The record gives the reactivity of an RNA of 177 nucleotides to DMS and 2A3. Conditions: 150 mM KOAc, 10 mM MgCl2 and 150 mM bicine (pH 8.5), 24 C. 2A3 adducts were read by reverse transcription with SuperScript II with manganese. As a SHAPE reagent, 2A3 marks flexible, mostly unpaired nucleotides at the ribose 2'-OH.
RNA sequence: GGGAACGACUCGAGUAGAGUCGAAAAAUCUGAUUGCCGAUAUGGUUGAAGAUAUAAAACCUAUACCAGAUGAUACUUAUCCUCCAAUUAUAGAGGGCUCAGAUGUGGAGUUAAGAGAAAUGUGUUAAUGGGAUAAAUGAUUCGUCAUUUAUCCCAUAAAAGAAACAACAACAACAAC
Reactivity to DMS in 0.01 (KOAc 150mM, MgCl2 10mM, bicine 150mM(pH8.5), 24C), signal-to-noise 8, nucleotides 027 to 126: a030u000c000u010g010a090u010u010g000c000c010g010a160u030a030u020g000g010u000u000g000a120a070g000a060u010a050u010a060a060a140a100c090c030u000a080u040a080c180c120a040g010a050u010g020a140u040a050c120u030u010a030u000c080c020u000c060c030a030a030u020u010a050u010a060g000a190g010g000g010c160u000c010a020g000a030u010g000u010g010g000a110g000u010u010a060a060g010a090g000a070a050a060u030g010u010g000u010u010a080
Reactivity to 2A3 in 0.01 (KOAc 150mM, MgCl2 10mM, bicine 150mM(pH8.5), 24C), signal-to-noise 8, nucleotides 027 to 126: a000u020c010u010g010a050u080u210g120c010c010g130a140u070a080u260g020g040u020u040g030a050a030g030a040u040a000u060a140a090a040a040c020c000u060a040u060a130c040c060a050g020a120u030g020a040u120a140c040u060u040a040u050c010c000u010c020c000a010a040u100u050a070u090a130g100a100g040g050g020c000u010c040a050g010a110u080g090u110g080g040a090g020u090u120a100a030g060a000g050a040a080a090u190g060u020g060u110u140a080